[RMDB]
RNA sequence: GGGAACGACUCGAGUAGAGUCGAAAACACCGUAGGGGGCCUCUGGGCCGUGUUACGUCGCCGCCCGCGAUGGAGCUUAGCUACGCCACCACCAUGCACUACCGGGACGUUGUGUUUUACGUCACAACUGUACUCAGGACUUCGGUCCUGAGUACAGAAAAGAAACAACAACAACAAC
Reactivity to 2A3 in 0.01 (KOAc 150mM, MgCl2 10mM, bicine 150mM(pH8.5), 24C), signal-to-noise 2, nucleotides 027 to 126: c060a050c050c030g000u080a140g000g070g010g080g000c000c000u050c060u100g030g020g000c030c080g010u050g000u000u110a050c080g010u050c040g030c030c000g030c000c020c000g030c050g020a030u030g000g070a070g010c090u170u140a010g000c030u040a010c040g020c040c000a040c000c000a000c000c000a010u100g000c000a010c040u090a050c000c010g090g000g000a000c040g000u020u050g050u010g060u060u010u030u090a080c130g060u060c030a020c020a130a010
The record gives the reactivity of an RNA of 177 nucleotides to 2A3.
2A3 adducts were read by reverse transcription with SuperScript II with manganese.